[RMDB]
RNA sequence: GGGAACGACUCGAGUAGAGUCGAAAAAGAAAAAUUAGGAGUGGAGAUGCAAUUUUAUUAGGGUACGUUAUUACUUCGCUUUGGAUGCUAAGGUACUGGACAAGGUUCCUCUUCACUGCAGCACCAGAGCAACAACAUAUUUCGAUAUGUUGUUGCUAAAAGAAACAACAACAACAAC
Reactivity to DMS in 0.01 (KOAc 150mM, MgCl2 10mM, bicine 150mM(pH8.5), 24C), signal-to-noise 4, nucleotides 027 to 126: a110g000a060a100a090a080a100u000u000a140g010g000a050g030u010g000g000a030g000a040u010g010c100a040a030u000u010u000u000a070u010u010a150g000g000g010u000a030c060g000u000u000a050u000u000a100c150u000u000c070g010c240u000u000u000g000g000a060u000g020c140u010a050a100g010g000u000a010c050u000g010g010a060c120a100a090g030g000u010u000c010c030u000c020u000u000c080a030c020u000g000c220a090g000c090a090c040c020a100g000
Reactivity to 2A3 in 0.01 (KOAc 150mM, MgCl2 10mM, bicine 150mM(pH8.5), 24C), signal-to-noise 2, nucleotides 027 to 126: a000g120a010a040a000a010a010u160u140a050g020g010a030g020u030g010g030a070g010a040u020g010c020a020a020u010u070u050u170a170u120u190a070g050g070g010u030a020c030g050u040u000a050u040u050a070c050u020u060c040g060c120u090u090u130g060g020a040u030g010c000u010a000a030g060g000u000a030c030u050g030g040a020c040a080a150g050g000u050u010c000c000u020c000u050u020c010a020c000u070g040c010a000g020c000a020c010c000a010g010